An RNA of 207 nucleotides, treated with 2A3 and read out base by base. For 2A3 the reverse transcriptase was SuperScript II with manganese. Source: RMDB library PDB130, as collected in RNAgym.
RNA sequence: GGGAACGACUCGAGUAGAGUCGAAAAAGACACCGCCCACCCUCUGCCGUACGGCUAACCCGCGGAAGCGGGGACAGCGGUAGGUGGGCAGUUUGGCUGGGGCGGCACACCCUCGAAAAGGUAUCGAGGGUGCCCUAAGGUCGGCUCAGGCGGGUCACAAUGAGUGAGAGUUCGCUCUCACUCAUUGAAAAGAAACAACAACAACAAC
Reactivity to 2A3 in 0.01 (KOAc 150mM, MgCl2 10mM, bicine 150mM(pH8.5), 24C), signal-to-noise 1, nucleotides 027 to 156: a000g100a020c040a020c030c030g040c000c000c010a050c010c000c010u050c010u020g000c000c000g020u060a020c010g110g020c010u020a070a040c000c000c000g030c010g110g180a140a070g050c000g000g000g000g000a020c080a010g000c010g080g020u020a020g040g210u160g000g030g000c000a000g000u020u030u120g050g000c070u080g040g000g010g030c030g020g000c000a000c010a000c010c010c000u010c000g060a120a090a080a110g230g020u260a120u140c000g010a000g000g010g020u000g010c010c020c000u060a160a040g080g040u020c000g000g000c000u030c050a020g090g010c030g020g000g000u010c000a000